[RMDB]
RNA sequence: GGGAACGACUCGAGUAGAGUCGAAAAAGUUACAUGGAAGUUUCUCUUAAGUCCUAUAUGAGAACACGUUUCUAGUAGGAAGGGGUAUGGAGGAGGAAAAAUUGAAGUCACUGUUGGUUUUAUGUUGAUAUUUACAGCAAGUUAUGGCUUUGGCUUACACGAUUUAAUCGUUCGCGAUUAAAUCGUGAAAAGAAACAACAACAACAAC
Reactivity to 2A3 in 0.01 (KOAc 150mM, MgCl2 10mM, bicine 150mM(pH8.5), 24C), signal-to-noise 2, nucleotides 027 to 156: a010g060u070u130a050c040a040u120g000g010a050a020g020u020u080u040c050u010c000u020u080a070a040g100u140c020c040u140a110u040a070u240g040a020g010a050a030c090a020c090g030u080u050u000c040u050a060g010u000a030g010g060a060a040g040g030g000g000u050a080u100g050g040a020g010g030a050g000g040a040a150a000a000a000u080u090g030a030a010g000u000c000a000c080u020g020u050u030g000g030u120u100u050u030a050u070g010u020u000g040a040u080a120u150u110u110a020c010a020g000c010a110a080g000u090u060a070u100g050g000c000u040u040u060g040g030c030u020u030a040
Reactivity to DMS in 0.01 (KOAc 150mM, MgCl2 10mM, bicine 150mM(pH8.5), 24C), signal-to-noise 1, nucleotides 027 to 156: a080g000u010u000a090c100a140u010g010g010a080a180g020u010u000u000c030u010c030u020u000a060a160g020u020c050c120u000a100u000a040u020g010a070g060a060a050c060a080c090g020u000u000u000c030u000a170g010u000a040g000g020a100a150g010g010g020g030u000a020u000g020g030a080g000g010a100g000g000a020a040a070a050a090u000u010g020a030a080g020u010c030a030c110u020g010u040u010g010g000u010u010u000u010a070u000g020u000u010g000a150u010a040u000u000u020a050c030a050g010c050a070a070g010u010u000a080u000g010g000c040u030u000u000g000g020c000u000u010a240

Chemical mapping of a 207-nucleotide RNA with 2A3 and DMS. For DMS the reverse transcriptase was MarathonRT. Source: RMDB library OK3TST, as collected in RNAgym. For 2A3 the reverse transcriptase was SuperScript II with manganese. Conditions: 150 mM KOAc, 10 mM MgCl2 and 150 mM bicine (pH 8.5), 24 C.